RNA sequence: GGGAACGACUCGAGUAGAGUCGAAAACGACUUUUCGAUUUUGGAUAGGUUCAGACUUCGUGUGUCCUUUAUGUUUUUCUCUGAAACGUAAUGAAGGGGUGCCAAAACGAAGGGUGGUUCGGAGGGGCGAUAAGAUUUGAUUCGUCAAAUUUUAUCGAAAAGAAACAACAACAACAAC
Reactivity to DMS in 0.01 (KOAc 150mM, MgCl2 10mM, bicine 150mM(pH8.5), 24C), signal-to-noise 9, nucleotides 027 to 126: c080g010a060c070u000u010u000u000c020g000a130u000u000u010u020g010g010a090u020a060g000g010u010u010c080a090g010a100c030u010u010c050g010u020g010u010g000u010c020c030u010u000u010a020u010g000u010u000u010u010u020c120u030c160u040g000a030a030a030c040g010u010a050a040u020g010a080a060g000g000g000g020u010g000c050c080a030a030a050a060c070g000a050a050g000g000g010u010g000g000u010u010c060g000g000a070g000g000g000g000
Reactivity to 2A3 in 0.01 (KOAc 150mM, MgCl2 10mM, bicine 150mM(pH8.5), 24C), signal-to-noise 9, nucleotides 027 to 126: c030g030a030c020u060u040u040u040c040g180a250u040u030u040u130g050g020a050u050a160g090g010u110u120c050a030g040a090c030u060u050c090g050u060g020u030g040u110c010c000u030u060u010a070u060g050u010u030u000u050u060c060u010c020u050g040a030a020a010c030g020u050a050a060u100g100a060a030g030g010g010g020u070g050c020c020a040a070a020a010c030g030a020a010g010g010g020u070g010g000u060u050c030g010g000a040g000g000g000g010
The data come from the RNA Mapping Database (RMDB), library OK1LIB. This 177-nucleotide RNA was probed chemically with DMS and 2A3. The RNA was probed in 150 mM KOAc, 10 mM MgCl2 and 150 mM bicine (pH 8.5) at 24 C. 2A3 adducts were read by reverse transcription with SuperScript II with manganese.